[RMDB]
RNA sequence: GGGAACGACUCGAGUAGAGUCGAAAACGCCUCGCAAGACGACUCGCCGCGACUUCCUCUUAUCGAGAGGUAAACAAGGAGCGAGUUUAAAGGCUAGUCAGCUCAGCUGGCAACACCGUCAAAUUGCGGGAACAUCCUAAGAGCUAUCGACCACCAACUUACAACAGACCUUCGGGUCUGUUGUAAGAAAAGAAACAACAACAACAAC
Reactivity to 2A3 in 0.01 (KOAc 150mM, MgCl2 10mM, bicine 150mM(pH8.5), 24C), signal-to-noise 1, nucleotides 027 to 156: c120g040c020c000u010c000g000c010a000a000g010a000c080g010a000c000u010c010g040c010c000g070c040g150a110c030u100u010c060c000u020c090u080u130a220u300c120g010a060g000a010g150g010u040a050a080a000c030a020a050g040g000a090g090c000g020a000g000u000u000u010a060a000a000g000g020c010u010a000g060u040c010a000g000c040u000c170a000g020c030u000g010g020c000a000a060c040a010c020c010g000u010c010a000a190a270u010u020g000c000g020g000g000a040a000c000a060u060c000c000u000a160a000g000a000g040c040u040a040u220c080g100a080c020c020a060c000c040a170a030